[RMDB]
Chemical mapping of a 207-nucleotide RNA with 2A3 and DMS. The DMS profile rests on 4,271 reads. It was measured as part of the RMDB library OK3TST. The RNA was probed in 150 mM KOAc, 10 mM MgCl2 and 150 mM bicine (pH 8.5) at 24 C.
RNA sequence: GGGAACGACUCGAGUAGAGUCGAAAACACUAUCAACUCCGAUGGUUGUAGCGAAUGUACCACCGACAUUAUAAAUCCUAAUAUGCUCAGCAACAUCAAUUUCACCAUUUACUCCUCGCUGCACCAAUGUCUCGGCUGUUGCUAAUGAUGUGCUAGCAACACUUCCUAGGUUCGCCUAGGAAGUGUUAAAAGAAACAACAACAACAAC
Reactivity to 2A3 in 0.01 (KOAc 150mM, MgCl2 10mM, bicine 150mM(pH8.5), 24C), signal-to-noise 6, nucleotides 027 to 156: c050a010c040u070a060u190c020a040a020c040u000c010c020g050a040u100g050g040u130u140g010u050a010g000c010g030a060a080u100g010u110a060c030c070a050c070c060g080a030c050a060u110u140a070u170a200a120a080u110c050c030u050a130a050u180a140u200g000c020u030c150a030g000c020a020a110c010a100u020c030a060a160u060u150u150c120a140c070c030a050u060u080u130a060c020u040c060c000u010c010g020c000u010g000c010a010c000c010a040a080u200g070u030c060u020c050g060g010c110u030g020u040u010g000c040u090a080a070u110g020a010u010g010u020g020c010u010a010g030c020
Reactivity to DMS in 0.01 (KOAc 150mM, MgCl2 10mM, bicine 150mM(pH8.5), 24C), signal-to-noise 2, nucleotides 027 to 156: c070a090c040u010a050u000c050a050a060c010u010c050c110g030a170u010g030g020u010u010g030u000a000g030c000g030a130a070u020g050u000a110c080c040a080c030c030g000a060c060a070u010u000a110u000a060a040a090u010c050c040u000a060a150u010a060u000g020c040u000c080a130g020c050a130a020c020a010u000c050a060a140u010u000u000c030a090c060c030a110u010u000u000a040c030u000c120c040u010c020g010c050u000g000c050a050c030c010a080a080u000g000u000c040u000c050g020g020c030u010g030u000u000g020c010u010a140a090u000g020a040u010g060u010g020c050u010a110g000c070